[RMDB]
RNA sequence: GGGAACGACUCGAGUAGAGUCGAAAACAAAAUUCUGUAUAUUUUGGUCCAUAAAGGAGUGGAACUCUUAUGACAUACUAUUUAUUUCUUACAUAGUUUUCCACUUACUAUCAUUUUUCACAGUUAUUUUUGUAUGUCUCAUCUCCUCUAAAUAAGAUGAUCGGGUAUUAUUCGUAAUACCCGAUCAAAAAGAAACAACAACAACAAC
Reactivity to 2A3 in 0.01 (KOAc 150mM, MgCl2 10mM, bicine 150mM(pH8.5), 24C), signal-to-noise 2, nucleotides 027 to 156: c000a000a040a010a010u090u040c010u040g060u080a130u000a060u170u010u010u070g000g000u010c070c000a020u180a060a240a000g000g000a000g000u010g000g000a010a040c000u000c000u230u040a040u050g070a020c000a090u080a070c030u120a160u130u300u140a060u140u180u110c060u000u090a070c010a030u010a000g050u000u000u000u000c000c000a030c020u000u050a060c010u030a000u050c000a000u020u020u020u160u110c080a060c020a080g100u270u100a100u030u120u000u040u070g010u000a050u050g070u000c000u000c010a120u020c070u080c030c080u100c080u220a160a190a110u300a140a070g000a080
Structure probing data (2A3) for a 207-nucleotide construct. It was measured as part of the RMDB library OK3TST. The 2A3 profile rests on 429 reads.